[RMDB]
RNA sequence: GGGAACGACUCGAGUAGAGUCGAAAAGAUAUGGAGAGAACUACACGUCACCAACCGACGAAGUCGGAAACGACAGAGGUUGGAAGUCGUGCUCUCCUAAGUCGAGAUCGCGUCUUCGGACGCGAAAGGAUAGAGCAAUGUUCGCAUUGCUCUAUCCAAAAGAAACAACAACAACAAC
Reactivity to 2A3 in 0.01 (KOAc 150mM, MgCl2 10mM, bicine 150mM(pH8.5), 24C), signal-to-noise 3, nucleotides 027 to 126: g010a020u070a050u100g010g000a000g010a010g020a070a010c060u180a030c300a000c010g020u020c010a050c130c000a010a020c020c020g260a300c080g120a300a020g010u000c010g000g000a140a070a040c010g010a000c030a020g070a030g020g030u020u000g000g000a050a050g030u010c000g010u000g000c000u000c010u000c010c000u020a130a020g040u020c010g000a010g030a160u030c000g010c000g000u000c000u040u100c290g140g000a020c000g000c000g020a000a000a000
Reactivity to DMS in 0.01 (KOAc 150mM, MgCl2 10mM, bicine 150mM(pH8.5), 24C), signal-to-noise 3, nucleotides 027 to 126: g010a020u000a300u010g010g000a040g010a030g000a140a030c080u030a300c020a000c000g010u010c040a300c000c000a020a020c010c000g010a200c220g020a060a100g000u000c010g010g020a060a040a120c000g010a000c010a020g000a070g000g020u000u000g000g000a060a060g010u000c000g000u000g000c010u000c000u010c000c000u000a020a080g010u000c000g010a160g010a130u000c010g000c010g000u000c000u010u000c230g050g010a030c000g010c000g010a000a010a060
This 177-nucleotide RNA was probed chemically with 2A3 and DMS. The RNA was probed in 150 mM KOAc, 10 mM MgCl2 and 150 mM bicine (pH 8.5) at 24 C. The 2A3 profile rests on 4,600 reads. Source: RMDB library TTRDEL, as collected in RNAgym. For DMS, 2,086 sequencing reads were counted. For DMS the reverse transcriptase was MarathonRT. Reactivities are given for positions 27 through 126.